The record gives the reactivity of an RNA of 177 nucleotides to 2A3 and DMS. The reactions ran in a buffer of 150 mM KOAc, 10 mM MgCl2 and 150 mM bicine (pH 8.5), at 24 C. It was measured as part of the RMDB library OK1LIB.

RNA sequence: GGGAACGACUCGAGUAGAGUCGAAAACGCGAGCAUGCUUUCCGCGCGGCGGCGCAGUUGGCGAUAGGCUUCGUUGCGGCUUGUGUAAACUUCCGUUGCACCGAGAGCAGAGGCCCGCAUCACACGCUGAAUGUUUGUGCUUCGGCACAAACAUUCAAAAAGAAACAACAACAACAAC
Reactivity to 2A3 in 0.01 (KOAc 150mM, MgCl2 10mM, bicine 150mM(pH8.5), 24C), signal-to-noise 3, nucleotides 027 to 126: c070g020c000g040a020g020c070a080u120g020c020u020u050u000c030c000g020c020g000c010g020g000c010g000g010c040g000c060a070g030u070u070g120g020c030g030a100u130a140g100g040c060u050u070c100g160u090u090g030c030g060g030c030u060u060g030u000g020u100a130a050a070c020u170u000c050c070g030u010u010g000c000a020c030c060g020a010g000a000g110c060a020g060a050g090g000c000c010c000g010c000a030u100c010a050c000a000c010g040c050
Reactivity to DMS in 0.01 (KOAc 150mM, MgCl2 10mM, bicine 150mM(pH8.5), 24C), signal-to-noise 1, nucleotides 027 to 126: c180g010c070g000a250g050c010a100u030g000c010u000u000u020c000c090g000c090g030c020g000g010c040g000g000c030g050c140a010g030u000u000g040g090c070g040a040u030a100g000g000c000u060u040c080g000u020u020g000c150g000g000c000u000u010g000u020g000u000a090a030a100c080u000u060c100c020g000u020u000g040c000a110c070c230g000a100g010a160g020c000a140g000a270g000g000c000c000c020g000c000a030u000c100a030c110a120c180g030c050